RNA sequence: GGGAACGACUCGAGUAGAGUCGAAAAGUAUAGCGAAGUUUGAGGCGACGAGCUAUACGAUGAAUCAGCCUCAAUUGAUAUCGGUAUACAGAUCAGCGGCGAUCAGAUACCGUAAUUAGUAGCCGCCAUCCGGAGUGGAGACGCACGACGGUCGUCACCCUGCUGGGUGAUUCGUCACCCAGCAGGGAAAAGAAACAACAACAACAAC
Reactivity to 2A3 in 0.01 (KOAc 150mM, MgCl2 10mM, bicine 150mM(pH8.5), 24C), signal-to-noise 1, nucleotides 027 to 156: g040u010a000u000a000g000c000g020a110a060g060u000u050u100g000a010g000g020c040g080a020c000g000a010g000c000u000a000u000a000c020g000a020u110g120a010a150u300c090a000g000c000c000u050c020a020a020u020u180g160a040u140a140u290c000g000g000u000a030u000a050c030a190g000a020u040c020a000g000c000g030g020c040g000a000u020c000a010g030a090u000a000c000c000g010u040a020a040u070u070a000g110u000a000g000c000c000g070c040c000a010u000c000c060g000g000a020g000u000g010g140a280g000a060c090g020c110a000c030g040a030c000g140g000u050c070g020u030c020a150